[RMDB]
RNA sequence: GGGAACGACUCGAGUAGAGUCGAAAAGAUAUGGAGAUGGCUAGUGCCAGAUAUACGUCGGAAACGACGUUUAUCGGUAAUUCUAGCAUCUCCUAAGUCAAAACGUUGAGGGGUUCGCCCCUCAACGGUUCUUGGAUGACUUCGGUCAUCCAAGAACAAAAGAAACAACAACAACAAC
Reactivity to DMS in 0.01 (KOAc 150mM, MgCl2 10mM, bicine 150mM(pH8.5), 24C), signal-to-noise 2, nucleotides 027 to 126: g000a060u000a300u000g000g020a020g020a030u000g010g020c000u000a000g030u000g000c050c050a230g020a010u000a000u000a010c000g020u000c000g010g020a120a110a220c000g000a020c000g020u000u000u000a000u000c000g030g030u000a080a140u020u030c000u000a010g000c010a030u000c000u010c000c000u000a010a080g020u000c040a120a080a080a300c010g000u000u000g000a030g010g000g020g000u010u010c300g020c010c000c000c000u000c020a010a000c000g010
Reactivity to 2A3 in 0.01 (KOAc 150mM, MgCl2 10mM, bicine 150mM(pH8.5), 24C), signal-to-noise 2, nucleotides 027 to 126: g000a000u040a010u180g010g000a000g000a030u060g290g180c000u010a000g020u050g110c050c060a020g040a000u010a000u010a000c000g030u000c000g030g000a030a060a050c010g000a000c020g010u010u000u020a000u010c000g030g000u070a110a230u190u010c010u000a010g020c000a010u000c000u000c000c000u010a080a020g040u000c020a050a020a120a170c020g010u000u000g000a010g030g000g000g060u030u160c230g220c020c010c050c010u000c000a000a000c000g000